[RMDB]
RNA sequence: GGGAACGACUCGAGUAGAGUCGAAAACACAACUGCGAAGGGGGGACGGAGAAGGCUAUGUUGGCCGGGCGACGGUUGUCCCCGUUUAAGCGUGUAGGCUGGUUUUCCAGGCAAAUCCGGAAUUGAACGUGCCAAAGAUAUUCGUAUCUUUGGCACGAAAAGAAACAACAACAACAAC
Reactivity to DMS in 0.01 (KOAc 150mM, MgCl2 10mM, bicine 150mM(pH8.5), 24C), signal-to-noise 2, nucleotides 027 to 126: c080a040c070a120a120c090u010g040c060g020a110a110g010g020g030g000g010g000a050c000g000g010a080g020a300a130g010g000c010u000a080u000g030u000u010g000g020c020c010g000g010g010c200g020a040c080g010g020u020u020g000u010c020c010c000c020g000u000u000u010a050a110g010c060g020u010g020u010a060g000g000c010u010g000g010u010u000u000u000c010c030a120g030g010c060a040a040a110u010c010c020g000g010a060a140u020u000g000a090a140
Conditions: 150 mM KOAc, 10 mM MgCl2 and 150 mM bicine (pH 8.5), 24 C. The record gives the reactivity of an RNA of 177 nucleotides to DMS.